RNA sequence: GGGAACGACUCGAGUAGAGUCGAAAAUUAAUGAAGCAAAUCUCCAAACGCCAACGAUGAGCGUUGCGCAAUCGCCGCUUAAGGCUUUUGCCGAGGCUGCUUGAGCCUUGUUACCAAAGAAAAGCCGAAAACCCAAAUGUCUUCGGACAUUUGGGAAGAAAUGAUAUGACUUCGGUCAUAUCAUUUCAAAAGAAACAACAACAACAAC
Reactivity to DMS in 0.01 (KOAc 150mM, MgCl2 10mM, bicine 150mM(pH8.5), 24C), signal-to-noise 1, nucleotides 027 to 156: u010u010a130a110u000g020a150a060g010c040a070a040a040u000c010u010c010c040a050a080a060c020g020c030c030a110a100c120g010a130u020g020a120g020c020g040u010u020g040c060g000c060a150a090u000c030g020c000c020g000c080u010u010a130a170g010g020c030u000u000u000u000g080c020c000g020a080g000g000c000u010g020c110u000u000g010a030g050c010c020u020u000g070u000u020a210c070c060a060a110a110g010a040a060a060a100g010c020c060g010a050a030a060a140c000c000c010a020a040a010u000g000u000c000u010u010c280g060g000a010c010a010u010u000u000g000g000g010a000a030
Reactivity to 2A3 in 0.01 (KOAc 150mM, MgCl2 10mM, bicine 150mM(pH8.5), 24C), signal-to-noise 4, nucleotides 027 to 156: u180u120a060a070u150g070a070a000g020c040a060a070a160u050c050u030c050c050a120a020a010c050g000c020c000a110a060c080g180a180u170g060a040g070c000g020u040u050g020c030g000c050a040a050u050c010g010c020c010g090c090u160u220a120a060g000g000c000u010u010u020u000g000c000c020g000a000g010g020c050u070g000c010u080u060g030a000g000c010c000u020u010g040u070u110a090c040c020a000a050a010g020a010a050a030a000g030c000c030g080a060a050a040a060c000c000c000a000a010a000u010g000u000c000u020u060c160g090g000a000c000a000u000u000u000g000g010g000a000a010
Annotation:
Structure probing data (DMS and 2A3) for a 207-nucleotide construct. The 2A3 profile rests on 2,539 reads. DMS adducts were read by reverse transcription with MarathonRT. Reactivities are given for positions 27 through 156.